[RMDB]
RNA sequence: GGGAACGACUCGAGUAGAGUCGAAAAUGUCACAAGAUAGAAGAGUUUCAGUCUAGGCUUAAUGGCAACCAUUGGACAAAGAUGCUUUCUUCCACCUAACAGGCCAUUAACAUCUUAAAGGUAUUUUUGUAUCUCUAAUUUUGUUUAUAAUAGGUGCACGCAUAUUGGGUUUCGACCCAAUAUGCGUAAAAGAAACAACAACAACAAC
Reactivity to 2A3 in 0.01 (KOAc 150mM, MgCl2 10mM, bicine 150mM(pH8.5), 24C), signal-to-noise 2, nucleotides 027 to 156: u040g020u020c010a030c000a140a040g030a100u110a040g060a060a010g010a020g030u090u070u110c040a060g060u000c020u060a030g070g000c010u020u060a050a000u090g020g000c010a050a040c080c000a090u110u090g070g010a020c040a010a100a030g050a070u150g050c100u060u080u020c010u030u000c040c010a020c000c000u060a150a060c100a110g140g000c020c000a010u010u030a000a010c000a020u030c020u060u020a050a020a020g010g010u070a060u000u250u140u150u190g020u030a010u060c000u020c030u000a020a100u080u010u000u050g030u020u080u010a130u070a200a080u050a100g080g010u030g060c070

Source: RMDB library OK3TST, as collected in RNAgym.
An RNA of 207 nucleotides, treated with 2A3 and read out base by base.
Values are in units of 0.01, from 0 to 300, in steps of 10.
The RNA was probed in 150 mM KOAc, 10 mM MgCl2 and 150 mM bicine (pH 8.5) at 24 C.
For 2A3, 576 sequencing reads were counted.